[RMDB]
RNA sequence: GGGAACGACUCGAGUAGAGUCGAAAAAAGGAAAGGCCUAAAAUGAGGAAGAGAGUUACCACAACAAGCAGUACCUAGUUCCAGUUCUUGGUCCCAGGAGUUUGUGGUUGUUGCUGCUUUCAUCUUCCUCAGCCAACACAAAAGGAAAGUGCCAAGAGAUGGGUAGUAGGUUCGCCUACUACCCAUCAAAAGAAACAACAACAACAAC
Reactivity to DMS in 0.01 (KOAc 150mM, MgCl2 10mM, bicine 150mM(pH8.5), 24C), signal-to-noise 1, nucleotides 027 to 156: a060a110g000g000a070a050a150g020g000c000c060u000a010a020a030a220u010g000a000g030g000a040a010g080a030g000a300g000u000u000a160c040c010a000c070a100a100c130a090a040g040c060a060g010u000a140c000c020u000a010g020u000u010c010c010a070g010u010u010c110u000u000g050g000u000c180c020c010a120g020g010a190g040u000u000u010g020u000g060g030u000u000g010u030u000g040c000u000g030c020u020u000u000c070a160u000c020u000u000c010c000u000c000a080g000c080c040a040a040c000a110c040a080a080a120a100g000g060a040a260a120g050u000g000c080c100a120a150g040a180
Reactivity to 2A3 in 0.01 (KOAc 150mM, MgCl2 10mM, bicine 150mM(pH8.5), 24C), signal-to-noise 1, nucleotides 027 to 156: a000a000g100g000a120a000a090g000g050c040c050u170a080a030a020a090u060g000a000g030g000a030a030g000a000g000a000g030u030u100a050c010c020a020c040a070a030c110a100a000g150c000a000g010u040a070c000c020u040a000g000u000u030c030c000a040g060u010u050c070u120u070g030g000u030c040c010c000a070g010g000a050g070u020u080u120g100u110g000g130u000u020g000u100u030g030c020u000g000c030u060u060u180c090a130u060c010u000u010c000c000u030c000a000g000c000c000a000a000c070a000c010a100a000a100a000g040g000a110a030a060g080u130g060c030c010a060a000g020a000
The record gives the reactivity of an RNA of 207 nucleotides to DMS and 2A3. For DMS, 1,334 sequencing reads were counted. The 2A3 profile rests on 421 reads. Values cover nucleotides 27 to 156. The RNA was probed in 150 mM KOAc, 10 mM MgCl2 and 150 mM bicine (pH 8.5) at 24 C.